Chemical mapping of a 177-nucleotide RNA with DMS and 2A3.
Source: RMDB library TTRDEL, as collected in RNAgym.
The RNA was probed in 150 mM KOAc, 10 mM MgCl2 and 150 mM bicine (pH 8.5) at 24 C.

[RMDB]
RNA sequence: GGGAACGACUCGAGUAGAGUCGAAAAGAUAUGGAUAUCUCAAGGAACUACAUUCGGUAAUCGGAAACGAUUAACGAAUGCCGAAGACAAGAUAUCCUAAGUCAAAACGCUUCCUUCGGGAAGCGAACAUAAUCUCGUUGUUCGCAACGAGAUUAUGAAAAGAAACAACAACAACAAC
Reactivity to DMS in 0.01 (KOAc 150mM, MgCl2 10mM, bicine 150mM(pH8.5), 24C), signal-to-noise 4, nucleotides 027 to 126: g000a050u000a300u010g000g000a010u000a000u000c000u000c050a180a220g000g010a140a070c040u000a110c010a020u000u000c000g000g010u000a000a010u000c000g010g000a100a090a160c000g000a000u000u000a020a010c000g000a000a000u000g000c010c060g000a040a080g000a110c140a050a010g010a020u000a000u000c000c000u010a040a100g010u000c030a060a090a100a160c020g000c000u000u000c000c000u010u000c160g040g020g000a000a010g010c000g010a010a060
Reactivity to 2A3 in 0.01 (KOAc 150mM, MgCl2 10mM, bicine 150mM(pH8.5), 24C), signal-to-noise 3, nucleotides 027 to 126: g020a020u060a010u150g000g010a000u010a020u000c020u030c070a120a140g060g010a080a060c100u190a060c300a030u000u000c000g010g000u020a020a010u000c000g000g020a010a060a040c010g000a010u000u010a000a030c020g000a000a000u000g000c010c010g110a150a030g060a040c100a100a000g000a010u010a000u000c000c000u010a140a000g040u010c010a030a020a080a140c020g000c000u000u010c000c000u020u050c260g090g000g000a000a000g000c000g000a000a000
2A3 is a SHAPE reagent: it acylates the 2'-hydroxyl of flexible nucleotides of all four kinds.